An RNA of 177 nucleotides, treated with 2A3 and DMS and read out base by base.
The reactions ran in a buffer of 150 mM KOAc, 10 mM MgCl2 and 150 mM bicine (pH 8.5), at 24 C.

RNA sequence: GGGAACGACUCGAGUAGAGUCGAAAAGAACCAGGCUUCGGCCUGGUUCAUAAUAACGCGGGCGUGCGACACAGCCGGAGCUGGCCUCGGAUAGUCUCAGUAUAAUCUUAGCCUUCGGGCUAAGAAAGUUGUCAAUAAGGUUCGCCUUAUUGACAACAAAAGAAACAACAACAACAAC
Reactivity to 2A3 in 0.01 (KOAc 150mM, MgCl2 10mM, bicine 150mM(pH8.5), 24C), signal-to-noise 2, nucleotides 027 to 126: g000a000a000c000c010a000g020g000c010u080u180c260g000g000c000c000u000g000g000u010u000c000a000u000a020a000u030a010a020c050g000c030g070g000g000c010g000u040g010c020g060a020c010a000c020a130g070c030c040g010g000a030g020c040u070g080g010c000c000u030c030g020g000a010u030a070g050u020c020u000c070a020g050u120a080u040a270a110u010c010u000u010a000g000c000c020u040u040c250g080g000g000c010u000a010a000g010a000a000a010
Reactivity to DMS in 0.01 (KOAc 150mM, MgCl2 10mM, bicine 150mM(pH8.5), 24C), signal-to-noise 4, nucleotides 027 to 126: g000a010a000c000c000a010g000g010c010u000u010c240g030g030c010c000u000g000g010u000u000c000a010u010a030a040u000a100a130c070g020c060g000g010g000c040g020u000g010c040g010a090c090a090c080a130g010c050c070g000g010a100g010c040u000g010g010c040c010u000c060g010g010a090u010a070g020u010c020u010c030a110g010u010a080u010a100a130u010c000u000u000a010g000c000c000u000u010c210g030g010g010c000u010a000a000g010a000a040a080
2A3 adducts were read by reverse transcription with SuperScript II with manganese.
Source: RMDB library M2PK50, as collected in RNAgym.
For DMS, 4,388 sequencing reads were counted.
Reactivities are given for positions 27 through 126.